[RMDB]
RNA sequence: GGGAACGACUCGAGUAGAGUCGAAAAUAAUGAAUUGCGGAACGCCUUAGGCUGGAAACAGAGCAGGGUUAGCAAUCGCUUGUAUACGGUGCAAAGUUUGCGAUGAGCGAUUAGUAUAUCUCGAAUCUCGUCAAGCAUGGUAAGCACACCAAAGGGCCAAAUGGUCUAACUUCGGUUAGACCAUUUGAAAAGAAACAACAACAACAAC
Reactivity to DMS in 0.01 (KOAc 150mM, MgCl2 10mM, bicine 150mM(pH8.5), 24C), signal-to-noise 2, nucleotides 027 to 156: u000a100a090u000g020a120a050u000u000g010c010g040g000a110a120c110g050c010c040u000u000a090g010g040c040u000g010g000a220a110a190c030a070g010a070g020c050a110g000g040g020u000u000a150g030c050a050a020u000c030g030c020u020u010g020u000a130u000a100c060g060g020u000g000c010a050a110a150g020u000u000u000g030c040g000a050u000g010a170g000c050g010a130u000u000a090g000u000a110u010a080u010c050u000c000g020a060a140u010c010u000c040g040u000c040a060a100g010c050a090u000g000g000u000a060a090g010c040a070c040a090c010c020a010a050a160g010g000g000c140
Reactivity to 2A3 in 0.01 (KOAc 150mM, MgCl2 10mM, bicine 150mM(pH8.5), 24C), signal-to-noise 1, nucleotides 027 to 156: u190a020a060u100g060a020a070u040u080g010c020g070g090a030a030c070g020c030c020u080u090a080g060g000c020u000g020g080a060a100a000c040a010g010a000g100c150a050g070g000g000u060u070a030g000c010a010a020u010c010g020c030u000u020g080u140a140u050a170c080g090g050u050g010c030a070a110a130g030u030u080u080g010c020g040a050u080g010a000g000c020g010a000u010u000a010g050u030a050u060a060u240c040u010c040g060a090a080u050c010u040c020g080u050c020a050a060g020c010a030u020g010g000u050a060a020g020c030a040c000a020c090c010a080a050a000g000g020g020c000